[RMDB]
RNA sequence: GGGAACGACUCGAGUAGAGUCGAAAAGGACUGCGCAGUCCGGCAACAUCAGCAGAGAGCCCGCUAUACGUGACGGAUUGGCUGAAGCGUACAGAAAUAUUGUGCCUCCUGCAAGAGGCAGCCAAGCAAAACGUACGUGAGUUCGCUCACGUACGAAGAUAUAAGAUUCGUUCGCGAAUCUUAUAUCAAAAGAAACAACAACAACAAC
Reactivity to 2A3 in 0.01 (KOAc 150mM, MgCl2 10mM, bicine 150mM(pH8.5), 24C), signal-to-noise 7, nucleotides 027 to 156: g020g010a020c030u060g030c120g020c110a020g020u000c000c000g020g000c020a050a060c020a130u120c030a010g020c030a010g070a010g010a010g120c000c020c020g000c020u070a070u040a130c070g030u060g070a030c040g030g050a090u060u050g050g000c010u020g020a070a020g010c010g050u030a040c020a030g140a100a130a030u280a100u130u130g030u050g020c000c010u020c020c040u070g060c040a080a050g010a010g070g000c010a000g000c000c000a020a010g010c040a030a070a020a050c010g000u000a000c000g000u010g000a000g000u040u140c220g010c080u000c000a000c000g000u000a000c000g000a000a000
Reactivity to DMS in 0.01 (KOAc 150mM, MgCl2 10mM, bicine 150mM(pH8.5), 24C), signal-to-noise 3, nucleotides 027 to 156: g030g020a060c040u000g030c110g040c080a120g000u000c040c010g060g000c050a050a130c070a090u000c050a050g000c030a100g010a160g000a170g020c010c000c040g000c030u010a060u010a070c050g000u000g000a250c060g000g010a270u010u000g020g060c040u000g000a030a300g000c030g030u000a090c020a070g010a070a110a120u000a100u000u000g000u000g000c000c040u000c030c000u010g000c180a140a090g000a030g030g000c000a040g000c070c030a040a080g040c070a050a050a090a200c000g010u000a000c020g000u000g010a030g010u000u010c300g020c050u000c010a000c000g000u020a010c010g020a000a050